The record gives the reactivity of an RNA of 177 nucleotides to 2A3 and DMS.
RNA sequence: GGGAACGACUCGAGUAGAGUCGAAAAGAUAUGGACGAAGAGCUUUGAUCUACUGAGUCGGAAACGACUUGUAGGGAGCUUCAAGUCCUAAGUCAAAUCCUAGCAGGGCUUCGGCCCUGCUAGGAAACUUGUACUCUUCGUUCGCGAAGAGUACAAGAAAAGAAACAACAACAACAAC
Reactivity to 2A3 in 0.01 (KOAc 150mM, MgCl2 10mM, bicine 150mM(pH8.5), 24C), signal-to-noise 1, nucleotides 027 to 126: g000a010u020a020u080g010g020a000c010g160a280a110g000a020g030c040u300u300u300g090a060u140c000u000a020c060u140g000a020g010u000c000g000g020a020a080a000c000g000a000c020u000u040g010u020a020g020g000g190a020g030c000u080u010c030a000a020g000u000c000c000u010a030a000g000u010c010a000a080a230u020c010c000u000a020g000c040a020g020g000g000c020u200u300c300g100g000c000c020c030u000g020c000u020a000g020g000a010a000a010
Reactivity to DMS in 0.01 (KOAc 150mM, MgCl2 10mM, bicine 150mM(pH8.5), 24C), signal-to-noise 1, nucleotides 027 to 126: g000a070u010a260u010g000g000a010c020g000a230a230g000a020g000c020u000u020u030g000a130u000c010u030a020c010u000g010a010g000u000c000g020g010a080a030a120c030g000a010c000u000u000g010u000a000g000g020g010a010g000c010u000u000c080a020a300g000u010c000c010u000a050a070g020u000c040a060a160a120u000c000c000u000a000g010c000a010g000g020g010c000u000u000c250g010g000c000c000c000u000g000c000u010a000g000g000a000a030a050

Notes: Reactivities are given for positions 27 through 126. The reactions ran in a buffer of 150 mM KOAc, 10 mM MgCl2 and 150 mM bicine (pH 8.5), at 24 C. Source: RMDB library TTRDEL, as collected in RNAgym. For DMS, 999 sequencing reads were counted.